[RMDB]
RNA sequence: GGGAACGACUCGAGUAGAGUCGAAAACCUCAUCGGGGGUGGGCGUCUGUGCAUGGGACAGCACUUUCUACUUUUGGAGGGAUGUCACUUGUAAUGCUUGGCAUUAGAUUGAACACACUUUUGGUUCCAUCUUAUCUCGAUUCGUCGAGAUAAGAUGAAAAGAAACAACAACAACAAC
Reactivity to DMS in 0.01 (KOAc 150mM, MgCl2 10mM, bicine 150mM(pH8.5), 24C), signal-to-noise 8, nucleotides 027 to 126: c020c010u000c130a070u000c110g020g000g000g010g030u000g000g010g010c100g010u000c060u010g020u000g010c030a070u000g010g000g010a050c060a070g010c070a080c040u000u000u000c040u010a080c180u010u000u010u000g010g010a070g000g000g000a130u000g000u000c030a050c080u000u000g020u000a050a040u000g000c030u010u010g020g010c020a040u000u010a040g000a110u000u000g000a060a050c050a070c110a080c120u000u000u010u000g020g000u000u000c040
Reactivity to 2A3 in 0.01 (KOAc 150mM, MgCl2 10mM, bicine 150mM(pH8.5), 24C), signal-to-noise 9, nucleotides 027 to 126: c000c010u040c040a110u060c020g030g000g000g010g030u080g010g000g010c020g030u000c050u060g080u050g010c030a070u070g020g030g030a020c020a020g050c020a020c000u050u090u030c060u100a160c040u110u130u160u160g050g030a050g000g020g020a020u040g030u030c010a030c090u030u040g070u110a060a020u070g040c080u120u120g080g010c010a020u010u030a050g050a110u020u100g060a070a010c080a010c000a040c120u070u060u090u160g060g000u050u000c020
Source information:
Structure probing data (DMS and 2A3) for a 177-nucleotide construct. For DMS, 19,679 sequencing reads were counted.